RNA sequence: GGGAACGACUCGAGUAGAGUCGAAAAUAAAAACUGCGAAGGGGGGACGGAGAAGGCUAUGUUGGCGGGGCGACGGUUGUCCCGGUUUAAGCGUGUAGGCUGGUUUUCCAGGCAAAUCAAAAAAAAACUUACAUAAUAUGUUCGCAUAUUAUGUAAGAAAAGAAACAACAACAACAAC
Reactivity to DMS in 0.01 (KOAc 150mM, MgCl2 10mM, bicine 150mM(pH8.5), 24C), signal-to-noise 1, nucleotides 027 to 126: u000a050a070a070a090a080c100u010g040c020g020a060a100g020g030g020g000g010g020a050c120g000g000a040g040a040a060g000g000c040u000a060u020g020u010u010g020g000c040g010g010g010g010c070g010a080c100g010g000u000u010g000u010c020c010c010g000g000u000u010u010a090a090g010c090g000u010g030u010a050g030g010c020u000g000g000u000u010u000u010c000c020a180g000g010c100a040a050a080u020c030a000a010a010a010a140a030a080a090a190